The record gives the reactivity of an RNA of 177 nucleotides to DMS and 2A3.
The reactions ran in a buffer of 150 mM KOAc, 10 mM MgCl2 and 150 mM bicine (pH 8.5), at 24 C.
The DMS profile rests on 4,922 reads.
For 2A3, 8,642 sequencing reads were counted.
It was measured as part of the RMDB library M2PK90.
Values cover nucleotides 27 to 126.
RNA sequence: GGGAACGACUCGAGUAGAGUCGAAAAAGAAAUAGCGAUUCUCGAAGGAGUUGAGUCCUUCGAGGAUUGCUAAGCAAAGAUGCAGAACUAUCAAUGAACGACUAUGCUCAUCUUUGUAUACAAAAAAGAGUAUCUUUUAGUUCGCUAAAAGAUACUCAAAAGAAACAACAACAACAAC
Reactivity to DMS in 0.01 (KOAc 150mM, MgCl2 10mM, bicine 150mM(pH8.5), 24C), signal-to-noise 5, nucleotides 027 to 126: a100g010a100a110a120u000a010g010c000g000a010u000u000c000u000c000g000a020a000g000g010a040g000u010u010g010a240g010u000c000c010u000u000c000g020a000g000g000a010u000u010g000c000u000a000a100g010c000a010a010a020g000a010u000g000c180a030g000a060a080c150u010a140u000c040a110a140u000g030a160a100c210g010a020c140u000a090u010g000c010u000c010a010u000c010u000u000u000g000u000a090u010a070c110a010a060a070a060a070a080
Reactivity to 2A3 in 0.01 (KOAc 150mM, MgCl2 10mM, bicine 150mM(pH8.5), 24C), signal-to-noise 6, nucleotides 027 to 126: a000g090a000a070a040u070a000g000c000g000a000u000u000c000u000c000g000a000a010g020g040a020g010u200u200g170a060g150u030c000c000u000u000c000g000a000g000g000a000u000u000g000c000u000a020a000g010c000a000a000a000g000a010u020g040c140a010g030a100a090c070u060a050u130c050a100a230u280g080a160a040c070g040a020c080u090a040u160g020c010u010c010a010u020c000u020u010u000g030u020a140u040a080c060a010a120a020a030a010a020